Structure probing data (2A3 and DMS) for a 177-nucleotide construct. For 2A3 the reverse transcriptase was SuperScript II with manganese.
RNA sequence: GGGAACGACUCGAGUAGAGUCGAAAAGGCCAAGGCCGAGCUCCGAGCGGCGUUAGCGCCCUCUGCGAAGCGCCCUGCGAUGCCCCAGCCACUGUGAACCUUUCUGCCUGCCCAGAUACACUCAACCCAUAGAGUUCACGUUCGCGUGAACUCUAUGAAAAGAAACAACAACAACAAC
Reactivity to 2A3 in 0.01 (KOAc 150mM, MgCl2 10mM, bicine 150mM(pH8.5), 24C), signal-to-noise 8, nucleotides 027 to 126: g040g010c030c030a050a060g090g000c020c010g000a030g010c010u020c030c040g010a030g010c110g020g000c020g070u100u130a060g070c000g020c010c040c010u040c040u080g050c040g050a070a020g020c010g010c020c000c010u030g020c030g040a040u110g020c000c000c020c000a010g020c010c000a060c030u050g040u060g080a060a060c010c000u020u090u070c020u050g040c010c020u020g000c010c010c000a020g020a030u120a030c060a030c040u080c030a030a050c000c010
Reactivity to DMS in 0.01 (KOAc 150mM, MgCl2 10mM, bicine 150mM(pH8.5), 24C), signal-to-noise 5, nucleotides 027 to 126: g000g000c030c040a100a120g010g000c030c030g010a150g010c010u010c020c060g010a060g000c250g030g000c020g020u020u010a160g000c030g030c050c020c020u000c070u020g030c030g010a090a100g030c050g010c020c000c030u010g000c030g020a120u010g000c030c020c030c030a120g010c010c040a040c080u010g000u010g000a100a120c080c030u010u000u010c050u010g000c010c010u000g000c020c010c020a080g000a090u030a050c130a050c020u010c090a080a140c150c060